[RMDB]
The record gives the reactivity of an RNA of 207 nucleotides to 2A3 and DMS. High 2A3 reactivity points to a flexible backbone, as in loops and unpaired stretches. The DMS profile rests on 1,813 reads. The reactions ran in a buffer of 150 mM KOAc, 10 mM MgCl2 and 150 mM bicine (pH 8.5), at 24 C. For 2A3 the reverse transcriptase was SuperScript II with manganese.

RNA sequence: GGGAACGACUCGAGUAGAGUCGAAAAUUCAACCCCAAAAAUCUAGUGCAAAUAUUGUCUUAAUUACUUAGGCUAAAAGAAAUAAGUAUUAAAGCGGGACAAGGCAUCGACAUUUGAUGCAAAUAUUUUUAGCAUAUUAGAUUCGUCUAAUAUGCAAUACAACGUAGAAGUUCGCUUCUACGUUGUAAAAAGAAACAACAACAACAAC
Reactivity to 2A3 in 0.01 (KOAc 150mM, MgCl2 10mM, bicine 150mM(pH8.5), 24C), signal-to-noise 2, nucleotides 027 to 156: u090u030c040a040a120c000c000c000c020a180a070a040a050a030u080c090u210a040g050u080g090c050a080a080a160u120a170u060u060g020u000c000u010u080a060a050u080u010a080c000u000u070a030g030g000c010u140a030a180a100a130g050a000a140a020u040a050a020g010u020a050u120u090a130a050a020g050c080g020g010g000a010c020a010a030g070g010c000a010u000c010g150a150c050a190u160u230u300g000a000u010g000c030a010a070a020u170a030u020u300u080u080u080a020g000c000a000u000a000u000u000a020g000a000u050u000c040g000u010c060u000a000a000u010a000u010g010c000a000a000
Reactivity to DMS in 0.01 (KOAc 150mM, MgCl2 10mM, bicine 150mM(pH8.5), 24C), signal-to-noise 1, nucleotides 027 to 156: u000u010c080a060a200c030c010c000c010a000a110a030a150a050u020c070u000a040g020u000g020c050a120a110a180u000a080u000u010g010u000c000u000u000a080a110u000u000a090c080u000u000a080g010g000c050u000a060a120a060a280g000a090a150a110u000a040a020g010u000a000u000u000a060a050a110g040c150g010g030g010a050c000a020a040g020g000c050a070u000c000g040a240c080a130u000u010u010g000a080u000g000c000a060a080a070u000a020u030u000u000u000u040a210g030c000a010u010a030u000u000a000g000a060u000u000c300g000u010c000u000a000a030u000a000u010g020c010a030a130